[RMDB]
Annotation: Conditions: 150 mM KOAc, 10 mM MgCl2 and 150 mM bicine (pH 8.5), 24 C. An RNA of 177 nucleotides, treated with 2A3 and DMS and read out base by base. It was measured as part of the RMDB library OK1LIB. For DMS, 11,706 sequencing reads were counted.

RNA sequence: GGGAACGACUCGAGUAGAGUCGAAAAGAAGCUGUAUCUGAAUCAAGAUGUACAAAUGAUGAGCUUCAGGUCUUACCUCAAGUAUUUCGCUGAUGCAGAUGAAGAGUUUGAAUGCGGUACAUAUGAACUAAUGAGUCAUCUUCGGAUGACUCAUUAGAAAAGAAACAACAACAACAAC
Reactivity to 2A3 in 0.01 (KOAc 150mM, MgCl2 10mM, bicine 150mM(pH8.5), 24C), signal-to-noise 8, nucleotides 027 to 126: g040a040a010g020c010u030g040u190a030u010c030u040g100a080a060u110c100a100a080g070a180u140g030u110a090c090a050a180a060u210g050a040u050g050a040g020c000u040u020c020a010g010g060u010c050u090u120a090c020c020u050c020a060a030g000u000a070u020u070u040c060g000c040u040g020a060u070g010c030a010g010a080u090g050a120a080g050a040g100u050u070u100g080a100a050u120g030c030g030g020u070a030c020a050u120a140u140g060a050a020
Reactivity to DMS in 0.01 (KOAc 150mM, MgCl2 10mM, bicine 150mM(pH8.5), 24C), signal-to-noise 6, nucleotides 027 to 126: g010a050a100g020c040u000g000u010a020u000c010u000g010a120a090u020c070a070a100g000a050u010g000u020a060c110a070a130a120u030g020a100u010g010a090g000c030u010u010c070a080g000g010u020c040u000u010a060c060c020u020c130a060a140g030u010a010u010u000u010c030g000c080u010g010a050u010g000c040a050g000a050u020g010a070a040g010a110g000u010u010u010g020a070a060u020g010c110g010g010u000a030c090a050u020a090u020g020a060a240